[RMDB]
RNA sequence: GGGAACGACUCGAGUAGAGUCGAAAAGAUAUGGACUGAAUGAUCGAUAAGCUACGCGUUCGGAAACGAACGGUAGCUUUUGACGAUCGCGUCCUAAGUCAAAGUUGAGGACUUCGGUCCUCAACAACCUAUUCUCUCGCUUCGGCGAGAGAAUAGGAAAAGAAACAACAACAACAAC
Reactivity to 2A3 in 0.01 (KOAc 150mM, MgCl2 10mM, bicine 150mM(pH8.5), 24C), signal-to-noise 1, nucleotides 027 to 126: g020a020u060a030u170g000g020a010c030u150g090a140a260u300g030a040u000c000g000a040u020a020a010g030c000u000a000c020g270c000g300u040u000c000g060g030a090a090a030c030g000a020a010c020g000g010u000a000g240c000u020u010u010u010g000a020c040g000a000u000c020g030c010g000u000c000c010u020a090a030g050u050c080a160a030a090g010u020u040g010a010g000g010a000c000u050u050c300g090g040u000c000c050u000c000a000a000c000a000a000
Reactivity to DMS in 0.01 (KOAc 150mM, MgCl2 10mM, bicine 150mM(pH8.5), 24C), signal-to-noise 2, nucleotides 027 to 126: g000a020u000a300u000g020g000a000c000u020g040a050a060u000g000a000u010c010g020a100u010a020a010g010c010u000a000c000g000c010g010u000u000c000g000g000a100a060a200c000g010a010a010c010g010g010u000a000g000c000u000u000u000u030g020a150c120g000a000u000c000g020c050g000u000c000c000u000a040a150g010u010c010a140a120a080g010u000u000g000a010g020g010a020c000u000u010c200g060g000u000c000c000u010c000a000a000c010a070a090